[RMDB]
RNA sequence: GGGAACGACUCGAGUAGAGUCGAAAAUAGAAGCAAUAAUGUUAAUAUGAGUAACAAGAAGCCUUUCUCCUCGCACACGCUUACAUCAGUAACUAAUAAUAUACUGAUAAUUAACAACCAAUAAACCAAAACAACACUAAAACGUUUAUUAAUUACACAAAUAGACUACGUUCGCGUAGUCUAUUUGAAAAGAAACAACAACAACAAC
Reactivity to 2A3 in 0.01 (KOAc 150mM, MgCl2 10mM, bicine 150mM(pH8.5), 24C), signal-to-noise 3, nucleotides 027 to 156: u120a000g040a030a000g050c020a010a100u120a090a040u120g040u090u100a100a050u130a150u250g050a030g070u050a060a030c020a040a050g130a090a020g020c000c000u020u120u020c020u000c000c000u010c000g000c000a010c010a010c120g030c030u060u080a040c020a050u010c010a010g000u010a040a030c020u020a030a110u090a200a030u150a130u040a120c000u000g010a000u030a090a030u070u080a070a020c040a010a040c020c020a000a060u120a140a050a010c060c040a040a070a020a070c060a070a010c030a010c110u150a050a120a090a030c020g010u000u010u070a060u020u030a060a120u140u150a030c070a000
Reactivity to DMS in 0.01 (KOAc 150mM, MgCl2 10mM, bicine 150mM(pH8.5), 24C), signal-to-noise 1, nucleotides 027 to 156: u000a030g000a090a100g040c020a080a180u020a120a060u000g010u000u000a070a060u000a110u000g010a080g030u000a040a190c030a030a100g040a140a120g040c030c060u010u020u000c030u000c020c020u020c030g010c020a070c060a050c050g010c040u000u010a140c150a060u000c020a010g000u000a060a100c010u000a060a100u000a050a090u000a190u010a020c000u020g000a000u020a050a140u000u010a060a080c010a070a120c050c020a020a030u000a040a120a060c020c060a040a010a040a120c080a020a030c090a090c080u000a080a060a030a060c050g030u000u010u000a040u000u000a060a060u000u010a040c020a200
This 207-nucleotide RNA was probed chemically with 2A3 and DMS. Source: RMDB library PDB130, as collected in RNAgym. The RNA was probed in 150 mM KOAc, 10 mM MgCl2 and 150 mM bicine (pH 8.5) at 24 C. For 2A3 the reverse transcriptase was SuperScript II with manganese.